[RMDB]
An RNA of 207 nucleotides, treated with 2A3 and read out base by base.
RNA sequence: GGGAACGACUCGAGUAGAGUCGAAAAUGGUAACAACUGGCUAACUUGUUACGCAGCAACUGCCAUGCAAUGCUGUUGAAAAAACAAGUGGGGUUUGUCGAGUUCGCGUAAUUCGAACAGUCUUGUCUUCUGACGAUAAAUGAAGACUACGCACGUAGACCAACUAUCCCUUCGGGGAUAGUUGGUCAAAAGAAACAACAACAACAAC
Reactivity to 2A3 in 0.01 (KOAc 150mM, MgCl2 10mM, bicine 150mM(pH8.5), 24C), signal-to-noise 1, nucleotides 027 to 156: u070g060g040u040a040a060c040a020a010c060u080g230g000c110u070a120a010c050u110u040g020u000u040a060c040g010c010a000g020c000a020a120c000u010g000c000c020a060u160g020c040a040a050u060g000c030u010g000u120u300g070a070a030a000a000a000a000c020a010a000g000u000g000g020g000g000u000u000u000g010u000c010g000a010g050u000u000c070g000c020g090u200a000a030u010u030c030g010a010a010c000a010g000u000c000u010u010g030u000c010u000u030c000u020g010a050c000g300a300u010a010a020a010u030g000a000a010g000a000c000u040a030c020g000c040a050c030g050u060a000
It was measured as part of the RMDB library RSTRND.